[RMDB]
RNA sequence: GGGAACGACUCGAGUAGAGUCGAAAAGAGCUUCUGGGAAUGAUUCUUUGGCACAUUCUACCAACAAUUUAACAUGACACAAAAUCAUUUUCAUAUCUUGUGAUAGUGUCAGCCAAGUGUUUCAUACACAUGGUGCUAGGUGCUGAAAAAGGUGUCAGUGAUUAGGCCCAUUCGUGGGCCUAAUCACAAAAGAAACAACAACAACAAC
Reactivity to 2A3 in 0.01 (KOAc 150mM, MgCl2 10mM, bicine 150mM(pH8.5), 24C), signal-to-noise 1, nucleotides 027 to 156: g040a030g000c020u130u000c010u090g010g000g050a090a180u080g020a110u090u020c040u090u040u060g050g000c030a000c020a020u090u000c080u040a080c060c040a090a110c060a130a040u020u150u230a080a080c060a070u090g060a000c030a030c000a030a100a210a030u010c000a000u000u160u230u000c120a060u190a090u190c110u160u180g000u030g050a000u090a000g010u000g000u040c000a000g000c060c010a070a010g000u000g070u090u150u210c240a230u130a100c000a000c000a040u070g000g000u000g100c010u020a030g050g000u020g060c050u120g070a030a050a110a000a070g110g010u010g000u030c130a120
Chemical mapping of a 207-nucleotide RNA with 2A3.
2A3 adducts were read by reverse transcription with SuperScript II with manganese.
The 2A3 profile rests on 403 reads.
Reactivities are rounded to 0.1 and cut off at 0 and 3.